[RMDB]
RNA sequence: GGGAACGACUCGAGUAGAGUCGAAAACGCGAAUGGGGCGUACUCGGCGAGCCCGGCUAUUAUAGCCUCAAGGCGCGCCGCGUUGCUAGCGAUCGUCUGGGCCGGCAGGCGCGUCACCCUGAGCACGCGCAUGCCCCGCUGGGAGACGAACACCAGCGUCUUUCAUCAGGUUCGCCUGAUGAAAGACAAAAGAAACAACAACAACAAC
Reactivity to 2A3 in 0.01 (KOAc 150mM, MgCl2 10mM, bicine 150mM(pH8.5), 24C), signal-to-noise 1, nucleotides 027 to 156: c080g000c020g060a160a180u220g000g010g070g000c020g060u040a000c000u000c000g020g010c000g020a000g020c000c000c000g030g010c040u060a150u300u120a240u300a170g000c000c000u090c090a110a060g040g000c040g000c000g000c000c000g000c000g000u000u010g000c000u020a060g020c010g090a020u020c000g030u020c020u060g050g090g050c010c000g010g050c010a000g000g000c000g010c010g000u030c000a120c000c030c110u060g080a050g130c070a020c010g030c000g000c000a010u100g010c000c010c010c050g000c000u100g020g090g020a080g020a020c030g000a060a030c030a060c080c020a070g050c060

Overview:
An RNA of 207 nucleotides, treated with 2A3 and read out base by base. 2A3 adducts were read by reverse transcription with SuperScript II with manganese. The RNA was probed in 150 mM KOAc, 10 mM MgCl2 and 150 mM bicine (pH 8.5) at 24 C. For 2A3, 796 sequencing reads were counted.